[RMDB]
RNA sequence: GGGAACGACUCGAGUAGAGUCGAAAACUAAUUUGUAUUAAUCUGCCUUUAUGUUUGAGGGAAAAAAAGCUGAGACAUUGCAUGAAAGAUGAUGCAGGAUAUACGCUGAUCUUUUGGCCCCAAUGAGUAAUAGGCUAUCUUUCGAGAUAGCCUAUUAAAAAGAAACAACAACAACAAC
Reactivity to DMS in 0.01 (KOAc 150mM, MgCl2 10mM, bicine 150mM(pH8.5), 24C), signal-to-noise 4, nucleotides 027 to 126: c050u010a060a100u010u010u000g010u000a080u020u000a080a070u010c050u000g020c090c060u000u010u010a040u000g000u000u000u000g010a100g020g000g000a000a000a050a100a070a070a100g010c020u000g000a110g010a060c090a080u000u000g000c060a050u000g000a080a080a090g000a060u000g000a080u010g010c010a030g010g010a110u000a090u000a080c130g010c040u000g000a080u000c020u000u000u000u000g010g010c080c010c000c050a070a070u010g020a110g020
Reactivity to 2A3 in 0.01 (KOAc 150mM, MgCl2 10mM, bicine 150mM(pH8.5), 24C), signal-to-noise 2, nucleotides 027 to 126: c010u020a050a100u080u100u150g030u040a080u080u080a110a130u010c040u070g050c020c000u060u120u050a040u050g130u090u100u140g040a060g040g010g050a000a090a000a000a000a070a070g070c000u040g000a000g020a080c020a050u020u120g060c000a030u100g100a080a000a060g080a020u140g030a030u080g000c010a020g020g030a010u030a010u000a160c080g000c020u020g060a120u030c040u000u080u030u040g050g010c000c030c010c000a020a070u120g020a030g090